[RMDB]
RNA sequence: GGGAACGACUCGAGUAGAGUCGAAAACUUGUAGCAGUUUAAGCGAUUCUUCAAACAGGCGUGCCGGUGGGAUAUCGUUCAGCAGGGUAGCGAGGCGAGGGAUCGGUUCUGCGGUUUCCGGGCUGAAGGUCAUAUUAGUAUUCGUACUAAUAUGACCAAAAGAAACAACAACAACAAC
Reactivity to 2A3 in 0.01 (KOAc 150mM, MgCl2 10mM, bicine 150mM(pH8.5), 24C), signal-to-noise 7, nucleotides 027 to 126: c020u060u110g110u200a040g020c060a040g030u060u110u190a100a010g080c010g020a030u010u030c010u040u020c020a080a140a090c040a070g120g020c030g060u060g020c000c020g040g040u060g020g090g000a030u070a060u160c080g040u070u060c030a030g020c010a020g040g070g020u060a040g040c020g020a040g030g020c040g010a030g010g020g010a030u030c030g030g040u060u020c020u050g030c000g010g000u010u030u000c020c000g030g050g000c040u080g030a110a030
Reactivity to DMS in 0.01 (KOAc 150mM, MgCl2 10mM, bicine 150mM(pH8.5), 24C), signal-to-noise 9, nucleotides 027 to 126: c060u000u000g020u010a120g030c060a040g010u000u010u010a070a100g010c030g010a050u010u000c010u000u000c050a060a130a130c180a070g010g000c030g020u000g000c040c020g010g020u000g000g000g000a070u000a060u000c110g000u000u010c040a190g020c040a100g010g010g010u000a120g010c040g000a090g010g010c130g000a080g000g000g000a050u000c030g010g000u000u000c030u000g020c050g010g000u000u000u000c020c010g010g010g010c060u010g000a110a120